[RMDB]
RNA sequence: GGGAACGACUCGAGUAGAGUCGAAAAAAAGAUAUGGAUUCUUUUGACGCUGGAGUACGUGGCGUUGAAACUUCGUCGGAAACGACGAAGUGGAGCCAUGAAACAGCGAUAAGAAUCCUAAGUCAAACGAUAACCACUAGUUCGCUAGUGGUUAUCGAAAAGAAACAACAACAACAAC
Reactivity to DMS in 0.01 (KOAc 150mM, MgCl2 10mM, bicine 150mM(pH8.5), 24C), signal-to-noise 2, nucleotides 027 to 126: a110a110a070g000a030u000a300u010g010g010a020u000u000c000u000u000u000u000g030a160c080g000c000u000g000g000a140g050u000a080c300g030u000g000g020c000g010u010u010g030a170a170a020c000u000u000c000g020u000c010g000g000a110a090a160c010g030a000c000g020a010a000g000u010g030g010a050g040c050c020a010u000g000a120a100a100c010a010g000c000g030a130u000a010a010g000a010a000u000c000c000u020a010a050g000u000c030a110a120a160
Reactivity to 2A3 in 0.01 (KOAc 150mM, MgCl2 10mM, bicine 150mM(pH8.5), 24C), signal-to-noise 1, nucleotides 027 to 126: a010a000a010g090a040u140a070u170g020g000a000u000u000c000u070u140u050u210g170a100c060g000c010u010g030g000a020g020u040a030c200g000u010g000g030c070g150u260u020g000a020a000a010c000u010u010c000g020u000c000g020g020a070a070a050c020g010a000c000g000a000a000g000u000g000g000a000g000c000c000a030u030g000a000a000a000c000a000g010c020g010a000u000a000a000g020a020a000u000c000c010u010a150a010g060u040c060a150a020a050
Structure probing data (DMS and 2A3) for a 177-nucleotide construct. In probing experiments dimethyl sulfate is read out at A N1 and C N3, which are open when not base-paired. Reactivities are given for positions 27 through 126. For 2A3 the reverse transcriptase was SuperScript II with manganese. The RNA was probed in 150 mM KOAc, 10 mM MgCl2 and 150 mM bicine (pH 8.5) at 24 C.